[RMDB]
RNA sequence: GGGAACGACUCGAGUAGAGUCGAAAAACUAGGUGCAUGGAUCGAAAGUGAAGUGUACUCUCAACUAGUAAGCUUAUGGGCCGAAAGGGAAGCGGGUUAAAAUUCCUGCACCACUCUAAAGGAUAUUCGUGUUGCUGAAGUUCGCUUCAGCAACACGAAAAGAAACAACAACAACAAC
Reactivity to 2A3 in 0.01 (KOAc 150mM, MgCl2 10mM, bicine 150mM(pH8.5), 24C), signal-to-noise 1, nucleotides 027 to 126: a000c130u100a020g000g000u000g000c000a000u000g000g000a000u000c050g010a150a000a010g000u000g000a000a000g000u000g020u000a000c050u060c050u000c000a000a160c000u080a000g070u060a040a040g000c000u120u010a050u080g300g000g000c000c000g000a150a000a040g000g000g060a030a030g000c000g000g000g000u120u040a190a000a070a100u080u020c000c000u000g010c000a000c040c020a170c000u070c070u030a020a290a000g080g000a120u140a070u200u000
Description: The record gives the reactivity of an RNA of 177 nucleotides to 2A3. It was measured as part of the RMDB library RFM100. The reactions ran in a buffer of 150 mM KOAc, 10 mM MgCl2 and 150 mM bicine (pH 8.5), at 24 C.